[RMDB]
RNA sequence: GGGAACGACUCGAGUAGAGUCGAAAAUACUGACUAAUAACUAACCGCCGUACGGAAACCAUCCGCAUGCGAAAGGAUGGUGUUCACCAAUCACUCGAGGAUGGGAAAGCAUGCCUGAGACGCAAGCUAGCCACAGGCCGUACGGAAACCAUCCUAGCGUACCACAGAUGUUCGCAUCUGUGGUACGAAAAGAAACAACAACAACAAC
Reactivity to 2A3 in 0.01 (KOAc 150mM, MgCl2 10mM, bicine 150mM(pH8.5), 24C), signal-to-noise 1, nucleotides 027 to 156: u240a000c140u060g140a000c040u120a100a180u120a130a080c110u050a150a000c030c010g000c000c000g010u040a010c020g000g040a110a010a000c000c000a000u020c000c000g040c070a060u100g110c040g090a190a010a050g000g000a010u000g000g080u000g020u030u110c050a070c050c000a040a040u080c060a110c010u030c120g260a050g070g030a000u010g000g020g140a020a210a000g030c060a010u080g000c020c020u060g100a020g000a130c020g030c010a050a030g040c060u110a090g100c080c050a090c000a130g000g050c060c010g010u000a000c040g000g000a000a030a000c040c040a000u070c000c000u120a030g000